Notes: The data come from the RNA Mapping Database (RMDB), libraries RFM100 and RFMREP. The record gives the reactivity of an RNA of 177 nucleotides to 2A3 and DMS. The RNA was probed in 150 mM KOAc, 10 mM MgCl2 and 150 mM bicine (pH 8.5) at 24 C. 2A3 adducts were read by reverse transcription with SuperScript II with manganese. Values cover nucleotides 27 to 126. For DMS the reverse transcriptase was MarathonRT.

[RMDB]
RNA sequence: GGGAACGACUCGAGUAGAGUCGAAAAUGCAUUCAUAAUGGAGAGAGAUGAUAAAGGUUCUCAGUUGCAUUAAAACUAAACACAAUAUAGGCAGCUGCUGUGAGCUAGACUAUUAUAGUUUUAUCCCAACUUUAAAGUUUUUCGAAACUUUAAAGUUAAAAGAAACAACAACAACAAC
Reactivity to 2A3 in 0.01 (KOAc 150mM, MgCl2 10mM, bicine 150mM(pH8.5), 24C), signal-to-noise 9, nucleotides 027 to 126: u020g000c010a020u010u090c030a040u140a300a080u210g120g000a030g000a000g010a010g010a090u150g030a050u200a170a140a060g120g010u110u000c010u000c010a020g030u040u020g000c000a010u030u070a020a050a010a000c040u050a020a140a010c080a010c050a180a080u130a010u020a110g070g000c020a010g000c030u060g010c090u170g120u140g130a010g010c010u020a030g040a050c010u000a010u090u040a040u040a040g010u000u000u020u030a020u020c010c000c000
Reactivity to DMS in 0.01 (KOAc 150mM, MgCl2 10mM, bicine 150mM(pH8.5), 24C), signal-to-noise 9, nucleotides 027 to 126: u000g000c010a030u030u020c070a100u030a120a130u030g010g010a100g000a050g010a060g010a070u010g010a170u020a090a130a120g000g010u020u000c010u000c000a120g000u010u000g000c010a010u000u000a030a030a040a050c050u010a030a080a110c160a110c200a090a080u020a040u000a010g000g000c030a020g000c020u000g010c140u030g010u020g010a030g010c000u000a070g010a040c010u000a010u000u020a110u010a030g010u000u000u000u010a100u010c000c000c000